[RMDB]
An RNA of 207 nucleotides, treated with DMS and 2A3 and read out base by base. 2A3 adducts were read by reverse transcription with SuperScript II with manganese. The RNA was probed in 150 mM KOAc, 10 mM MgCl2 and 150 mM bicine (pH 8.5) at 24 C. Source: RMDB library OK3TST, as collected in RNAgym. DMS adducts were read by reverse transcription with MarathonRT.
RNA sequence: GGGAACGACUCGAGUAGAGUCGAAAACAGCGUAACUUCGGCCUUUCAUUAAUUCCACAAUACAUCUUUUUGACAAAUCAUUUUCGUUCAGUACUUCCUAUCAUGACCUUAUACAGCAAACUGUUCUACAAUGAUAAACUAAUAUGUCGGACCGAAGGAUUAAACUCUAGUUCGCUAGAGUUUAAUCAAAAGAAACAACAACAACAAC
Reactivity to DMS in 0.01 (KOAc 150mM, MgCl2 10mM, bicine 150mM(pH8.5), 24C), signal-to-noise 3, nucleotides 027 to 156: c040a120g030c050g020u000a080a190c040u000u000c020g020g030c020c000u000u000u000c020a060u000u000a050a210u010u010c020c020a070c030a080a110u000a100c040a090u000c000u010u010u000u010u000g030a210c070a050a070a100u020c040a060u000u000u000u000c050g000u010u000c030a050g040u000a020c060u000u000c010c000u000a050u000c060a090u000g020a100c050c030u000u000a110u000a090c020a080g000c030a050a030a050c010u000g000u010u000c020u000a060c090a060a060u010g010a050u000a060a060a120c070u000a060a090u010a080u000g020u000c040g020g010a030c010c010g020a060a060g010
Reactivity to 2A3 in 0.01 (KOAc 150mM, MgCl2 10mM, bicine 150mM(pH8.5), 24C), signal-to-noise 9, nucleotides 027 to 156: c030a010g090c040g100u090a050a060c020u010u010c010g000g000c010c020u080u150u100c050a080u070u130a130a090u110u040c040c000a060c050a090a050u100a110c060a130u100c090u070u160u090u090u140g070a060c050a040a150a070u060c030a070u040u030u090u100c040g010u020u030c010a000g020u020a050c030u080u060c010c020u060a100u180c050a100u130g050a070c010c010u100u070a090u060a130c100a030g050c030a030a090a120c010u010g010u030u010c010u040a040c030a050a030u050g030a030u070a070a080a010c030u040a030a090u070a070u200g060u040c020g010g010a050c010c010g020a020a000g030